[RMDB]
Conditions: 150 mM KOAc, 10 mM MgCl2 and 150 mM bicine (pH 8.5), 24 C.
The record gives the reactivity of an RNA of 177 nucleotides to DMS and 2A3.
2A3 is a SHAPE reagent: it acylates the 2'-hydroxyl of flexible nucleotides of all four kinds.
The data come from the RNA Mapping Database (RMDB), library OK2TST.
RNA sequence: GGGAACGACUCGAGUAGAGUCGAAAACGGGAGUGUCUUUCUCCAUAUUGACUGGCAGCCCGGCUACCGACGAUGGCACAACAGGCUGAAUGCAAUAGAUCUGAUUUGCCCUGAGCAAACAGGAGUGAUUAUUAACAAUGUUCGCAUUGUUAAUAAUAAAAGAAACAACAACAACAAC
Reactivity to DMS in 0.01 (KOAc 150mM, MgCl2 10mM, bicine 150mM(pH8.5), 24C), signal-to-noise 9, nucleotides 027 to 126: c090g010g000g010a070g010u000g010u000c030u000u000u000c020u000c090c090a110u010a070u010u000g010a070c050u010g010g010c030a050g010c030c020c020g000g000c070u000a080c040c020g010a090c160g010a120u010g010g010c030a040c060a060a090c090a070g010g010c040u000g010a080a080u010g010c060a060a060u000a070g010a090u000c030u000g000a160u000u000u000g000c020c020c150u010g000a140g010c040a020a030a040c030a040g000g000a130g010u000g000
Reactivity to 2A3 in 0.01 (KOAc 150mM, MgCl2 10mM, bicine 150mM(pH8.5), 24C), signal-to-noise 9, nucleotides 027 to 126: c030g020g010g010a060g110u070g040u050c030u030u080u010c030u000c020c020a040u100a090u130u130g060a060c030u020g030g010c010a010g020c010c000c000g000g020c030u060a060c010c020g050a060c050g070a100u120g020g000c030a020c010a150a050c010a060g050g000c010u040g060a070a040u110g000c020a020a060u030a110g100a090u030c020u030g070a300u020u010u050g020c010c000c060u180g060a120g050c020a020a010a020c010a010g020g030a050g080u130g050